RNA sequence: GGGAACGACUCGAGUAGAGUCGAAAAGGUCAUCCUUCACAGGAGCGUGUGGAAGUCCUGCUCGGGGCGGAAGCAUUAAAACCAUUCGAGCUAGUCAAUGCGUGGCGUGUCUCUCCGCAGCGUGUUGUGUAUGAGAGUGGAUUCGUCCACUCUCAAAGCUAUACAGGUCUUUCGAGACCUGUAUAGCAAAAGAAACAACAACAACAAC
Reactivity to DMS in 0.01 (KOAc 150mM, MgCl2 10mM, bicine 150mM(pH8.5), 24C), signal-to-noise 1, nucleotides 027 to 156: g030g020u000c030a040u000c000c000u000u010c080a170c110a130g000g000a050g000c170g050u000g030u010g020g000a250a190g010u000c000c040u020g010c120u020c060g020g050g030g030c030g090g020a210a140g010c090a100u010u100a080a140a140a080c020c030a220u000u010c050g010a140g080c040u000a080g000u000c030a060a020u000g010c030g020u000g010g010c030g030u000g000u010c040u000c020u000c100c020g030c000a180g040c000g040u010g010u000u000g000u030g050u000a120u020g050a060g020a020g020u000g020g020a110u010u000c260g030u000c010c000a000c020u000c010u010c010a030a020a190
Reactivity to 2A3 in 0.01 (KOAc 150mM, MgCl2 10mM, bicine 150mM(pH8.5), 24C), signal-to-noise 3, nucleotides 027 to 156: g050g010u100c030a070u040c020c010u150u180c050a030c040a080g070g020a090g030c090g030u030g010u070g020g050a080a060g030u070c020c020u050g060c080u070c080g010g010g030g060c020g030g000a010a020g000c010a030u070u180a090a030a030a040c030c010a020u070u060c070g020a030g010c100u110a050g210u110c040a010a010u020g020c040g040u020g000g010c040g010u060g090u050c050u020c020u020c100c010g040c030a040g040c020g000u000g000u000u020g010u010g020u020a100u130g000a000g000a000g010u000g000g020a020u030u060c180g060u040c030c000a000c000u000c000u000c000a000a000a000